[RMDB]
RNA sequence: GGGAACGACUCGAGUAGAGUCGAAAAGAUUCCUCAUCAGCUAUAAAAGCAAAACCUUCAUAUCUAUCCUUGUUUCUAAACCAGUCUCAUAGAUAUGAAGGCUUUGUUUCUGAUGAAGGAUUGUGGGCUCCACCCUACAGUUCGCUGUAGGGUGGAGAAAAGAAACAACAACAACAAC
Reactivity to 2A3 in 0.01 (KOAc 150mM, MgCl2 10mM, bicine 150mM(pH8.5), 24C), signal-to-noise 2, nucleotides 027 to 126: g090a030u030u040c000c000u040c000a000u000c000a000g030c070u130a050u080a270a190a050a010g010c000a000a000a000a010c020c000u010u000c000a000u000a000u000c000u000a020u060c020c010u010u010g020u040u080u060c160u290a170a010a000c010c010a000g040u020c020u020c140a030u000a020g000a000u000a000u010g000a000a000g010g000c000u020u000u000g000u000u020u010c000u000g000a000u000g030a040a080g020g010a010u030u060g060u140g000g030g050
Reactivity to DMS in 0.01 (KOAc 150mM, MgCl2 10mM, bicine 150mM(pH8.5), 24C), signal-to-noise 1, nucleotides 027 to 126: g020a150u010u000c000c020u000c000a000u000c000a010g010c300u000a050u000a070a030a180a090g010c000a000a000a000a020c020c000u000u010c000a030u000a020u000c000u000a000u000c270c090u000u000g030u000u030u000c050u010a040a000a000c030c070a030g000u040c020u010c180a060u000a000g040a020u000a000u000g000a010a000g000g020c020u000u000u000g000u000u000u000c000u000g000a000u010g000a150a090g000g000a000u000u000g000u000g000g000g020
Chemical mapping of a 177-nucleotide RNA with 2A3 and DMS. Source: RMDB library RFM100, as collected in RNAgym. In probing experiments dimethyl sulfate is read out at A N1 and C N3, which are open when not base-paired. Conditions: 150 mM KOAc, 10 mM MgCl2 and 150 mM bicine (pH 8.5), 24 C.